The data come from the RNA Mapping Database (RMDB), library OK3TST.
Structure probing data (DMS and 2A3) for a 207-nucleotide construct.
The reactions ran in a buffer of 150 mM KOAc, 10 mM MgCl2 and 150 mM bicine (pH 8.5), at 24 C.

RNA sequence: GGGAACGACUCGAGUAGAGUCGAAAAAACCAUAAUCUUGCGCGAUUGUGAUAAAUGGUUCAAACCGCGAAUAAAUAGGGGACGUGUGAUGGCAAAAGAUGUCGAUGAAAUCGCCAUUACACGCGCGAUCAUUGGCGCUAUCGCAUCUACAUGUAAACUUCCAUAUGUAGUUCGCUACAUAUGGAAGAAAAGAAACAACAACAACAAC
Reactivity to DMS in 0.01 (KOAc 150mM, MgCl2 10mM, bicine 150mM(pH8.5), 24C), signal-to-noise 1, nucleotides 027 to 156: a060a040c010c000a070u010a100a090u010c090u000u000g030c020g040c060g010a080u000u010g080u060g030a040u010a060a090a050u000g010g020u000u000c010a100a070a100c050c010g000c030g020a140a100u000a060a080a200u000a140g010g040g050g000a040c010g030u000g010u000g000a030u020g000g000c000a110a070a100a090g030a070u000g010u000c120g000a140u000g040a020a070a110u020c050g050c020c010a040u000u000a020c000a020c000g010c040g050c020g010a060u000c020a080u010u020g020g000c030g020c030u000a040u000c030g000c000a090u000c010u010a060c060a020u000g000u000a050a050a070
Reactivity to 2A3 in 0.01 (KOAc 150mM, MgCl2 10mM, bicine 150mM(pH8.5), 24C), signal-to-noise 4, nucleotides 027 to 156: a000a000c100c010a070u140a090a040u080c080u100u210g050c080g000c020g020a050u070u030g010u010g030a080u070a120a060a030u070g010g000u050u050c110a110a100a060c030c010g020c030g080a080a050u170a090a110a030u130a090g040g000g000g030a030c000g000u000g000u000g000a000u000g000g030c040a070a050a090a060g070a070u120g080u190c110g060a060u120g110a090a070a030u100c040g000c010c000a000u000u030a010c030a020c010g000c000g000c020g000a000u010c000a020u050u040g050g000c000g000c020u020a000u010c000g000c030a030u030c060u070a060c030a090u070g080u160a060a030a070